[RMDB]
RNA sequence: GGGAACGACUCGAGUAGAGUCGAAAAGUAUAGCGAAGUUCGAGGCGACGAGCUAUACGAUGAAUCAGCCUCAAUUGAUAUCGGUAUACAGAUCAGCGGCGAUCAGAUACCGUAAUUAGUAGCCGCCAUCCGGAGUGGAGACGCACGACGGUCGUCAAUGGCUGAUUAAUUUCGAUUAAUCAGCCAUAAAAGAAACAACAACAACAAC
Reactivity to DMS in 0.01 (KOAc 150mM, MgCl2 10mM, bicine 150mM(pH8.5), 24C), signal-to-noise 2, nucleotides 027 to 156: g000u000a000u000a000g100c000g030a120a220g020u000u000c000g040a050g180g120c000g020a070c030g010a300g020c000u000a020u010a000c000g000a130u010g010a140a180u010c090a190g000c020c010u000c010a180a170u010u010g030a170u020a050u000c030g000g010u020a040u010a070c070a280g000a190u000c010a080g010c020g030g040c040g000a100u000c040a230g000a080u010a000c000c010g000u000a040a030u020u000a160g030u010a110g010c000c030g030c000c040a050u000c030c030g050g000a300g000u010g060g010a120g060a050c040g000c120a150c010g000a060c070g010g030u000c210g020u030c090a150
Reactivity to 2A3 in 0.01 (KOAc 150mM, MgCl2 10mM, bicine 150mM(pH8.5), 24C), signal-to-noise 3, nucleotides 027 to 156: g010u010a010u010a010g020c030g100a160a030g020u070u110c110g010a000g000g000c010g000a010c010g000a020g000c000u000a000u000a020c000g010a020u150g060a020a140u120c080a010g000c030c000u020c020a050a070u030u140g140a110u040a080u280c010g000g000u010a010u030a150c070a050g000a000u010c020a010g000c000g020g000c000g020a000u000c000a020g000a110u000a000c000c000g030u060a040a040u030u210a090g140u030a010g020c020c010g030c030c010a050u000c020c040g010g000a040g020u030g060g040a150g020a050c060g000c100a010c010g050a010c010g000g080u050c120g000u020c040a040